Chemical mapping of a 207-nucleotide RNA with DMS and 2A3. It was measured as part of the RMDB library OK3TST. For 2A3 the reverse transcriptase was SuperScript II with manganese. The DMS profile rests on 1,451 reads. DMS adducts were read by reverse transcription with MarathonRT.

[RMDB]
RNA sequence: GGGAACGACUCGAGUAGAGUCGAAAAAUAGACGUUACGUUCGCACUUGAUUGGUCACUGUCACUAGGUGGUCAAGCUCUUGAGUAUGUACUUCAAUAUGCUUAUGAAAUUGGUGUAAUAACUGAGGAAACUGUAAGGGAGCAAUUGAGGAAAACUACAAUCGGUAAGACUUCGGUCUUACCGAUUGAAAAGAAACAACAACAACAAC
Reactivity to DMS in 0.01 (KOAc 150mM, MgCl2 10mM, bicine 150mM(pH8.5), 24C), signal-to-noise 1, nucleotides 027 to 156: a180u000a110g000a100c040g080u000u010a060c050g010u000u020c020g090c070a090c070u000u000g010a200u030u000g030g020u010c010a060c030u000g000u000c240a070c230u020a230g020g030u090g020g030u000c020a080a030g050c000u000c080u000u000g000a150g060u000a060u030g010u000a070c090u000u000c030a040a150u000a060u020g030c010u000u000a030u000g030a030a070a120u000u010g010g020u000g030u020a050a130u030a120a090c060u000g000a080g010g020a100a040a150c150u000g000u000a090a080g020g000g000a050g040c030a000a120u000u020g010a100g040g010a040a060a130a100c010u000a120
Reactivity to 2A3 in 0.01 (KOAc 150mM, MgCl2 10mM, bicine 150mM(pH8.5), 24C), signal-to-noise 2, nucleotides 027 to 156: a000u210a040g050a040c040g020u040u080a040c040g020u050u050c020g000c020a050c060u070u060g020a050u050u020g020g030u020c000a010c020u030g060u160c010a030c210u070a050g030g000u000g010g000u020c010a010a000g040c030u010c010u080u070g030a030g030u080a070u130g060u030a080c020u020u030c010a030a080u050a090u200g000c010u050u020a060u180g080a060a100a070u080u110g060g000u020g000u060a060a060u080a120a040c030u020g020a020g010g070a190a110a030c050u050g040u200a090a000g080g050g020a020g000c000a020a040u020u030g000a030g000g000a050a030a020a010c040u130a030